[RMDB]
An RNA of 177 nucleotides, treated with 2A3 and DMS and read out base by base.
DMS adducts were read by reverse transcription with MarathonRT.
For 2A3 the reverse transcriptase was SuperScript II with manganese.
RNA sequence: GGGAACGACUCGAGUAGAGUCGAAAACUGUUAAUUCCUUUUGGAAUUUAGAGCCAUUGAAGGUGAAAGCCCUGUUCGCGGGUGUCGACAUCUAGACCAUGCCCUUAGCUCCACGAGUAGGAAUGUCGAAUGCCUAUAAUUUCGAUUAUAGGCAUUCAAAAGAAACAACAACAACAAC
Reactivity to 2A3 in 0.01 (KOAc 150mM, MgCl2 10mM, bicine 150mM(pH8.5), 24C), signal-to-noise 9, nucleotides 027 to 126: c010u000g030u090u090a030a020u030u030c010c000u060u160u100u270g020g000a020a010u040u030u060a110g010a010g050c020c020a070u060u140g100a080a030g020g000u040g040a070a040a020g030c000c000c000u020g050u050u090c100g000c050g050g030g020u100g060u070c030g020a020c010a030u010c030u040a030g060a090c030c020a030u080g010c000c000c000u050u060a020g010c010u000c010c010a050c050g040a020g030u060a030g010g080a090a050u060g080u050c050
Reactivity to DMS in 0.01 (KOAc 150mM, MgCl2 10mM, bicine 150mM(pH8.5), 24C), signal-to-noise 9, nucleotides 027 to 126: c040u000g010u020u010a030a030u000u000c000c000u000u020u010u010g030g010a020a030u000u000u010a050g010a110g010c040c050a100u010u010g010a110a070g010g020u000g000a070a120a170g000c020c010c010u000g010u010u010c100g030c070g010g020g010u010g010u010c050g010a200c040a040u000c030u010a120g010a090c070c070a040u010g000c040c010c010u000u010a070g010c050u000c010c040a060c150g010a080g020u010a060g010g010a040a050u010g010u020c140